[RMDB]
RNA sequence: GGGAACGACUCGAGUAGAGUCGAAAAAGAGUUAUUGCGGUAGGGAGACGAGAGUCGUCCCUAGUAGCUCGUCAGAGCUGCGACACUGUCAAAUUGCCUGGACAUCCCGCUACGCUGAGGAGACCGUCUGAUUGGGGAAACCUGAUCGGACACCGACCCCUAUAGUCAGCUUCGGCUGACUAUAGGGAAAAGAAACAACAACAACAAC
Reactivity to 2A3 in 0.01 (KOAc 150mM, MgCl2 10mM, bicine 150mM(pH8.5), 24C), signal-to-noise 2, nucleotides 027 to 156: a000g140a010g050u130u080a120u160u140g020c020g000g040u000a000g020g000g020a010g010a000c000g010a000g000a030g200u000c100g130u100c000c000c000u030a000g010u000a000g010c000u010c000g100u170c180a070g000a020g000c010u020g040c000g020a010c120a050c210u090g010u030c010a070a170a300u110u080g060c050c060u060g040g020a020c000a040u060c000c000c000g000c040u050a060c120g070c100u030g110a060g090g000a020g030a020c070c110g000u010c010u010g000a000u030u000g020g000g000g000a000a010a020c000c010u020g000a000u000c000g010g010a000c000a000c000c010g160a110c010
Overview: Structure probing data (2A3) for a 207-nucleotide construct. Values cover nucleotides 27 to 156. 2A3 adducts were read by reverse transcription with SuperScript II with manganese. As a SHAPE reagent, 2A3 marks flexible, mostly unpaired nucleotides at the ribose 2'-OH.